An RNA of 207 nucleotides, treated with 2A3 and read out base by base. For 2A3 the reverse transcriptase was SuperScript II with manganese.
RNA sequence: GGGAACGACUCGAGUAGAGUCGAAAAGGGAAACCUACUCGAGCGAGGCGGAGAUCGAGCGCCAGUUCGUGCGCGGGGACGUGAAGUUGCUUCGGCUUCUUCUUGUUCGCGUCCUGGGUGGUACGGCUCCUUCUUCACACCAGGCGGAGUUGGAAACGACUAGCAAAGGGUUCGCCCUUUGCUAGUCAAAAGAAACAACAACAACAAC
Reactivity to 2A3 in 0.01 (KOAc 150mM, MgCl2 10mM, bicine 150mM(pH8.5), 24C), signal-to-noise 1, nucleotides 027 to 156: g130g010g000a080a090a000c000c000u020a000c000u000c000g000a000g010c010g010a020g050g040c070g000g020a040g000a060u050c010g030a030g040c020g050c000c000a010g160u080u050c040g010u090g000c050g000c000g010g020g000g000a000c010g000u010g030a000a000g000u010u000g000c000u020u040c170g130g000c000u000u000c040u020u000c000u050u200g060u100u060c060g020c030g110u070c010c010u000g050g010g000u030g040g000u090a140c120g080g030c030u070c000c010u000u000c000u020u030c000a050c100a090c010c040a040g060g000c040g040g120a020g060u010u000g000g020a060a060a060c190